[RMDB]
An RNA of 177 nucleotides, treated with DMS and 2A3 and read out base by base. 2A3 adducts were read by reverse transcription with SuperScript II with manganese.

RNA sequence: GGGAACGACUCGAGUAGAGUCGAAAAUUGCUCAAUCUGCAGAUGUCAAGGCCGCGGAGUUGGCCGCGAAGCGCCAACAAAUUGCAGCUCUUGCUAAAGAGCUUGCUUUGGAGAGGGCCCAUGAGGCACCUCUAUGACGAUUCGUCGUCAUAGAGGUAAAAGAAACAACAACAACAAC
Reactivity to DMS in 0.01 (KOAc 150mM, MgCl2 10mM, bicine 150mM(pH8.5), 24C), signal-to-noise 9, nucleotides 027 to 126: u010u000g010c030u000c040a110a100u010c060u000g010c040a060g010a100u000g000u000c050a080a120g000g010c040c030g020c040g000g010a170g010u000u000g010g010c020c030g010c090g000a110a130g010c140g020c010c010a020a030c020a050a070a060u000u010g010c010a040g000c000u000c000u000u000g010c260u010a070a020a010g000a020g010c000u000u000g030c000u000u000u000g000g000a110g000a100g000g000g010c010c010c030a090u000g010a130g010g010c090
Reactivity to 2A3 in 0.01 (KOAc 150mM, MgCl2 10mM, bicine 150mM(pH8.5), 24C), signal-to-noise 5, nucleotides 027 to 126: u080u090g010c020u030c040a080a090u020c060u090g010c020a030g040a210u090g090u140c040a060a070g050g000c030c000g030c030g060g000a120g080u020u020g040g030c030c020g020c000g050a110a040g050c050g020c040c000a000a010c010a010a160a030u100u070g010c000a000g000c010u000c000u020u080g050c050u210a170a070a000g000a000g010c000u040u140g010c000u050u050u080g060g000a120g020a030g010g030g000c000c040c000a090u130g040a220g060g030c030